Chemical mapping of a 207-nucleotide RNA with DMS and 2A3. Conditions: 150 mM KOAc, 10 mM MgCl2 and 150 mM bicine (pH 8.5), 24 C. 2A3 adducts were read by reverse transcription with SuperScript II with manganese.

RNA sequence: GGGAACGACUCGAGUAGAGUCGAAAAAGCACGGUUUUUGAGGACGCAUUUUGUCCGUGCGGUAAUGCCCUCCUUUACACUUUCUCGCAUGGUGCGGGAGUGUGGAGACGAAACAAAAGCUAGUCUCGAUAGGCGGUUAACUUCGGUUAACCGCCAACUAGCAACGUAUCUUCGGAUACGUUGCUAGAAAAGAAACAACAACAACAAC
Reactivity to DMS in 0.01 (KOAc 150mM, MgCl2 10mM, bicine 150mM(pH8.5), 24C), signal-to-noise 1, nucleotides 027 to 156: a070g000c000a000c010g000g020u000u000u000u010u000g000a050g000g000a020c010g000c080a170u010u000u000u010g050u010c000c020g110u000g030c000g030g030u010a070a050u000g000c020c010c010u010c200c020u020u010u010a040c010a030c010u010u010u000c010u000c010g030c020a300u010g040g030u000g060c010g020g000g010a010g020u000g050u010g010g040a010g000a220c060g000a060a050a060c020a010a020a020a090g010c080u000a130g000u000c010u000c050g000a190u000a070g040g040c010g010g040u000u010a000a010c010u000u020c300g010g020u010u000a040a000c010c000g010c000c000a000a010
Reactivity to 2A3 in 0.01 (KOAc 150mM, MgCl2 10mM, bicine 150mM(pH8.5), 24C), signal-to-noise 4, nucleotides 027 to 156: a000g000c000a000c020g000g000u000u000u000u000u010g070a100g040g020a030c050g020c090a140u000u010u000u010g010u010c010c000g010u010g000c040g010g040u160a060a080u160g030c000c000c000u020c000c000u020u020u040a010c000a000c000u110u190u060c030u040c000g030c030a090u260g280g020u270g140c000g000g000g000a000g000u000g000u000g000g000a010g000a010c060g040a060a020a000c010a000a030a000a000g030c020u090a060g010u010c000u000c030g070a130u110a120g010g000c010g000g000u000u000a000a000c000u020u040c220g040g000u010u000a000a000c010c000g010c000c000a000a010